[RMDB]
RNA sequence: GGGAACGACUCGAGUAGAGUCGAAAAGGAGUCCUCUAACCUGAGUAUUCUGGAGUUGUUUCCAUGAUGGACAGAGUGGUGAGGCCCCAUCUUGGUGGCAGAUUUUGAGUGUAGGGAGCCUUGGUGGCGACCUAGUCUGUUUCGACAGACUAGGUCGAAAAGAAACAACAACAACAAC
Reactivity to DMS in 0.01 (KOAc 150mM, MgCl2 10mM, bicine 150mM(pH8.5), 24C), signal-to-noise 9, nucleotides 027 to 126: g010g000a090g010u010c030c020u000c020u010a140a120c100c060u000g010a110g010u000a050u000u000c040u000g010g010a070g010u000u010g010u000u010u000c010c010a070u010g010a060u000g010g000a100c060a050g000a110g020u000g010g010u000g010a090g000g010c050c040c020c030a070u000c070u000u000g010g020u010g010g010c040a050g000a090u000u000u000u010g010a080g010u010g010u000a050g000g000g010a110g010c070c060u000u000g010g020u000g010g010
Reactivity to 2A3 in 0.01 (KOAc 150mM, MgCl2 10mM, bicine 150mM(pH8.5), 24C), signal-to-noise 6, nucleotides 027 to 126: g040g000a030g050u070c020c010u010c050u040a110a150c010c020u030g030a030g080u080a080u120u040c040u060g060g010a040g020u050u040g040u030u130u000c010c020a040u120g030a050u060g030g030a020c040a040g080a040g080u080g060g060u070g050a040g030g040c020c010c010c000a060u060c050u060u120g030g030u070g010g020c030a040g010a130u110u100u110u190g080a070g040u050g030u090a040g010g020g030a020g010c010c030u040u080g050g000u040g050g030

This 177-nucleotide RNA was probed chemically with DMS and 2A3. Values are in units of 0.01, from 0 to 300, in steps of 10. Conditions: 150 mM KOAc, 10 mM MgCl2 and 150 mM bicine (pH 8.5), 24 C. The 2A3 profile rests on 8,260 reads.